[RMDB]
RNA sequence: GGGAACGACUCGAGUAGAGUCGAAAACCACAGCCCAGGCCUCUCCCAAGCCACCUCCGCUUUCCACAGCUCCUUGCCACCUUCCGUACUUUCCCCAGAGCUGGAAGUAGGAAACUUCUCCCCUGCAGCUAAAAGCUUGUUUCGACAAGCUUUUAGCAAAAGAAACAACAACAACAAC
Reactivity to DMS in 0.01 (KOAc 150mM, MgCl2 10mM, bicine 150mM(pH8.5), 24C), signal-to-noise 3, nucleotides 027 to 126: c040c000a160c190a120g000c010c000c020a100g000g000c030c040u010c070u000c010c040c020a100a120g030c040c030a050c050c040u010c050c030g000c060u020u010u000c050c010a100c080a100g020c050u010c010c060u000u010g010c030c010a050c040c040u010u040c040c020g010u000a110c060u000u020u020c010c000c010c040a070g020a100g020c130u000g000g010a010a050g000u000a070g020g000a060a080a050c070u000u000c040u000c020c000c020c020u000g000c070a160